[RMDB]
RNA sequence: GGGAACGACUCGAGUAGAGUCGAAAAGAUAUGGAUGAGGCUUUUGACGGAAGUCGUUCGGAAACGAACGGACUUCCGAUAAGCCUAUCCUAAGUCAAAUCAGCUCGAACUUCGGUUCGAGCUGAAACCUCUUGACUUAGUUCGCUAAGUCAAGAGGAAAAGAAACAACAACAACAAC
Reactivity to 2A3 in 0.01 (KOAc 150mM, MgCl2 10mM, bicine 150mM(pH8.5), 24C), signal-to-noise 2, nucleotides 027 to 126: g020a040u100a020u160g020g020a000u120g300a070g030g000c050u140u090u220u300g300a140c060g000g000a000a000g010u020c030g000u000u010c020g000g010a040a050a020c020g000a020a010c040g020g070a050c010u000u020c000c000g000a010u000a000a000g000c010c000u010a000u010c000c000u000a180a020g040u050c040a010a050a180u020c000a010g000c000u000c000g000a000a000c000u070u140c300g070g000u020u000c000g000a000g000c020u000g000a000a010a000
Reactivity to DMS in 0.01 (KOAc 150mM, MgCl2 10mM, bicine 150mM(pH8.5), 24C), signal-to-noise 2, nucleotides 027 to 126: g000a050u000a300u010g000g000a000u010g030a020g010g010c000u010u000u010u010g000a190c100g000g010a040a010g000u000c000g000u010u010c000g000g000a180a100a220c000g010a000a000c010g020g020a020c000u000u000c000c010g020a030u000a020a010g010c000c000u010a050u000c000c000u000a070a140g010u000c020a090a120a140u010c000a010g010c020u000c000g000a020a010c000u000u000c180g040g000u000u000c000g010a000g020c010u000g000a000a060a100
Conditions: 150 mM KOAc, 10 mM MgCl2 and 150 mM bicine (pH 8.5), 24 C.
This 177-nucleotide RNA was probed chemically with 2A3 and DMS.
As a SHAPE reagent, 2A3 marks flexible, mostly unpaired nucleotides at the ribose 2'-OH.
Reactivities are rounded to 0.1 and cut off at 0 and 3.
2A3 adducts were read by reverse transcription with SuperScript II with manganese.
DMS adducts were read by reverse transcription with MarathonRT.
It was measured as part of the RMDB library TTRDEL.